[RMDB]
Structure probing data (2A3 and DMS) for a 207-nucleotide construct.
Reactivities are rounded to 0.1 and cut off at 0 and 3.
2A3 adducts were read by reverse transcription with SuperScript II with manganese.
The reactions ran in a buffer of 150 mM KOAc, 10 mM MgCl2 and 150 mM bicine (pH 8.5), at 24 C.
RNA sequence: GGGAACGACUCGAGUAGAGUCGAAAAGUCGCUGAAGCGGACCAGCACCUGAUAGACGCCGGCGACUACGCUGAUGACUUCGCCGCUCAGUACUUCGGCUUUCUCGCCCUUGCCAUGGUCGAAGGUGAUCACGUCUCCGGCGACGAGGCUGGACAGGAUUCGAUCGUAUGUUCGCAUACGAUCGAAUAAAAGAAACAACAACAACAAC
Reactivity to 2A3 in 0.01 (KOAc 150mM, MgCl2 10mM, bicine 150mM(pH8.5), 24C), signal-to-noise 2, nucleotides 027 to 156: g030u040c020g020c040u050g040a100a010g040c000g000g020a040c000c000a000g000c020a160c030c030u070g040a190u140a160g080a050c010g020c000c000g000g020c030g010a010c020u060a070c150g010c060u030g010a060u130g050a080c000u080u000c110g020c030c010g020c030u010c040a010g000u060a140c050u040u060c020g000g000c000u080u070u000c090u110c040g050c000c050c000u040u120g050c090c030a130u170g000g000u040c020g010a070a010g050g030u020g030a090u050c040a000c070g000u000c000u010c000c000g010g020c000g000a000c000g010a040g010g000c010u010g000g010a030c030a040g100g010
Reactivity to DMS in 0.01 (KOAc 150mM, MgCl2 10mM, bicine 150mM(pH8.5), 24C), signal-to-noise 1, nucleotides 027 to 156: g020u010c030g020c000u010g020a090a060g010c030g000g020a050c010c030a060g010c010a050c040c000u060g050a140u000a040g000a180c000g000c010c000g010g030c100g010a080c020u000a050c130g000c010u000g000a150u010g010a030c030u000u000c070g010c030c000g020c030u000c040a110g010u000a050c110u000u010c050g020g000c010u000u010u000c100u000c130g000c040c020c070u010u000g020c040c030a160u020g000g030u010c010g020a110a110g010g000u000g000a160u010c090a080c080g000u000c030u020c010c000g010g080c010g000a090c010g010a030g060g020c030u010g000g010a070c030a180g010g010